Notes: Source: RMDB library M2RFPK, as collected in RNAgym. Chemical mapping of a 207-nucleotide RNA with 2A3 and DMS. Values are in units of 0.01, from 0 to 300, in steps of 10. Values cover nucleotides 27 to 156.
RNA sequence: GGGAACGACUCGAGUAGAGUCGAAAACUUAUGCUCUCGCUGCCUAAUGGCGGUGCGGGAAACCCACUCUAAAGUCCUUAGGGUUAGCCCCUUAAGGCGGGGUUCGGAGGCACCUGGCAACAGAAGCUGAAACUGUGCACAUUCGUGUGCACAGUAAUCAAGUUUUGUUAUUCGUAACAAAACUUGAAAAAGAAACAACAACAACAAC
Reactivity to 2A3 in 0.01 (KOAc 150mM, MgCl2 10mM, bicine 150mM(pH8.5), 24C), signal-to-noise 5, nucleotides 027 to 156: c000u150u120a090u300g030c010u000c000u010c010g010c020u030g010c010c010u300a300a170u240g000g020c040g090g000u040g010c030g020g010g000a060a030a040c000c030c000a080c050u160c070u150a150a130a250g300u020c000c000u000u010a000g000g000g010u030u060a040g040c030c000c000c000u010u040a010a000g000g000c000g000g000g000g000u060u180c090g110g010a040g040g000c000a000c000c000u040g300g000c000a010a010c000a020g010a000a000g000c010u020g020a070a000a000c000u000g000u000g000c000a000c000a010u050u130c190g110u020g000u000g020c000a000c000a000g000u010a000a010
Reactivity to DMS in 0.01 (KOAc 150mM, MgCl2 10mM, bicine 150mM(pH8.5), 24C), signal-to-noise 1, nucleotides 027 to 156: c020u020u000a010u000g050c000u000c020u000c010g040c020u000g020c000c000u010a190a120u010g050g070c010g030g000u000g020c040g000g020g020a040a070a070c000c000c060a130c100u000c080u010a040a040a110g010u000c050c010u010u000a040g000g000g000u020u010a240g000c230c250c000c000u000u000a030a040g000g090c000g010g000g010g000u000u000c040g010g030a300g010g020c010a030c020c010u010g020g050c050a050a150c030a100g010a030a100g030c000u010g020a100a070a100c010u020g000u020g020c000a030c000a080u000u000c290g020u000g040u000g020c000a000c000a000g020u000a020a080
For 2A3, 3,323 sequencing reads were counted. In probing experiments dimethyl sulfate is read out at A N1 and C N3, which are open when not base-paired.